An RNA of 207 nucleotides, treated with 2A3 and DMS and read out base by base. For 2A3 the reverse transcriptase was SuperScript II with manganese. Reactivities are rounded to 0.1 and cut off at 0 and 3. For DMS, 9,003 sequencing reads were counted. For 2A3, 7,474 sequencing reads were counted.
RNA sequence: GGGAACGACUCGAGUAGAGUCGAAAAGGUCGGGAUUAUAUCAACCCAGCAAUCAAACCAGUAUUCGACAAAAUUGCAGAUAGAGCUUGGAAGGUGGUGACCUCUGCAUGAGCAGCAUUGACGAGCGCGUCGUCCAAAUGAAGUUCGACAACGGCCACAGAUACUAUGGUUUCGACCAUAGUAUCUGAAAAGAAACAACAACAACAAC
Reactivity to 2A3 in 0.01 (KOAc 150mM, MgCl2 10mM, bicine 150mM(pH8.5), 24C), signal-to-noise 7, nucleotides 027 to 156: g020g010u050c030g030g010g010a080u090u130a120u150a060u230c060a030a090c010c010c010a010g040c030a020a070u090c040a060a050a050c040c010a020g040u070a160u090u110c080g040a050c060a020a130a040a050u090u070g000c020a010g010a060u090a020g070a040g020c030u050u060g050g030a050a040g030g030u050g000g030u030g030a050c000c020u020c010u020g000c030a060u110g040a030g040c050a000g010c020a040u010u090g050a040c020g030a020g040c050g000c010g060u020c000g000u000c020c000a040a090a060u160g030a120a020g040u050u070c020g020a020c020a080a040c020g030g000c020c020a030
Reactivity to DMS in 0.01 (KOAc 150mM, MgCl2 10mM, bicine 150mM(pH8.5), 24C), signal-to-noise 3, nucleotides 027 to 156: g040g020u000c060g010g050g000a150u010u000a150u000a140u010c050a080a150c030c020c010a200g020c040a070a080u000c040a050a150a030c010c010a080g000u000a150u000u000c060g020a070c020a050a200a050a060u000u000g010c010a090g000a120u000a090g010a130g020c030u010u000g020g020a100a060g020g020u020g020g040u000g000a060c020c050u000c030u000g000c030a090u000g010a130g010c010a070g020c040a110u010u000g010a070c060g000a050g020c050g010c060g020u010c020g030u010c000c040a040a090a140u010g010a060a130g000u000u000c040g020a100c040a030a070c030g020g000c020c020a170